Description: Structure probing data (2A3 and DMS) for a 207-nucleotide construct. 2A3 adducts were read by reverse transcription with SuperScript II with manganese. Conditions: 150 mM KOAc, 10 mM MgCl2 and 150 mM bicine (pH 8.5), 24 C. Reactivities are given for positions 27 through 156. DMS adducts were read by reverse transcription with MarathonRT. For DMS, 5,823 sequencing reads were counted. It was measured as part of the RMDB library OK3TST.

RNA sequence: GGGAACGACUCGAGUAGAGUCGAAAAGAUCGAUCUCUCCUUCGAAGGAGAAGUCCUCUUCAGGAGACUGAUCGAAGUCGAGAAGCUUCUCUCAGAGGACUGAAGUCUCAGCUAGGAAGCUGAUCCUAGUCGAAGGACUGAAGCUCUUCCUAGUCGAGGAUCACUAAUCAUUCGUGAUUAGUGAUCCAAAAGAAACAACAACAACAAC
Reactivity to 2A3 in 0.01 (KOAc 150mM, MgCl2 10mM, bicine 150mM(pH8.5), 24C), signal-to-noise 5, nucleotides 027 to 156: g060a050u110c050g020a100u040c010u010c000u000c040c010u100u170c080g100a120a040g060g010a050g020a030a010g030u040c000c010u010c010u040u040c060a050g030g020a040g060a120c040u030g000a010u010c010g030a090a030g190u220c050g000a010g000a100a010g010c050u030u000c010u010c000u000c060a020g010a020g010g020a020c030u040g030a060a010g060u020c020u000c050a010g000c010u010a010g030g080a110a030g050c090u050g020a070u070c010c020u040a040g040u030c020g040a070a030g070g010a000c000u020g030a050a020g000c010u000c000u030u020c000c000u030a040g040u110c050g050a050
Reactivity to DMS in 0.01 (KOAc 150mM, MgCl2 10mM, bicine 150mM(pH8.5), 24C), signal-to-noise 3, nucleotides 027 to 156: g000a110u000c020g010a080u010c020u000c010u010c000c010u000u030c100g010a160a100g000g020a060g000a100a060g030u010c010c010u000c000u000u010c060a140g030g000a120g010a120c020u000g000a140u000c040g000a060a150g000u000c030g010a120g020a270a130g010c020u000u000c020u000c030u020c070a100g010a050g000g010a130c010u030g000a130a120g010u000c040u010c010a130g010c010u000a040g010g010a070a040g020c110u000g020a060u000c010c000u000a010g020u000c030g010a150a150g010g010a010c010u000g010a100a060g000c020u000c010u000u000c040c010u000a070g020u000c050g000a270